The record gives the reactivity of an RNA of 177 nucleotides to 2A3 and DMS. The DMS profile rests on 5,755 reads. 2A3 adducts were read by reverse transcription with SuperScript II with manganese.
RNA sequence: GGGAACGACUCGAGUAGAGUCGAAAACUUUAGGGCAUUUGACAUCUGCAACUAUAAGGCUAAGGUUGCUGGUAUUGGAAAAUACUACAAGACUAAUACUUGUAGGUUUGUAGAAUUAGAUGACCAACACUAUAGGGAUGUUCGCAUCCCUAUAGUGAAAAGAAACAACAACAACAAC
Reactivity to 2A3 in 0.01 (KOAc 150mM, MgCl2 10mM, bicine 150mM(pH8.5), 24C), signal-to-noise 4, nucleotides 027 to 126: c010u100u120u240a130g020g000g000c010a020u010u030u030g030a030c040a130u010c010u010g010c000a010a000c010u010a000u000a060a000g050g030c030u040a130a030g050g020u010u010g020c100u010g020g010u010a030u000u020g080g040a100a080a030a010u020a020c000u010a020c020a100a040g030a040c010u040a030a100u050a210c010u000u010g010u010a010g020g060u010u070u000g010u010a010g010a010a010u010u010a030g010a020u010g040a070c010c010a000a020
Reactivity to DMS in 0.01 (KOAc 150mM, MgCl2 10mM, bicine 150mM(pH8.5), 24C), signal-to-noise 2, nucleotides 027 to 126: c020u000u000u010a120g020g010g010c010a020u000u000u000g010a040c110a080u000c020u010g010c000a020a040c010u000a030u000a020a010g000g000c200u000a120a200g000g010u000u000g010c200u010g010g010u000a010u010u000g000g020a130a110a010a020u000a010c000u000a020c040a030a140g000a070c030u010a060a140u000a100c010u000u010g010u000a010g000g000u000u000u000g020u000a010g010a050a300u000u000a030g010a020u000g000a040c010c010a120a250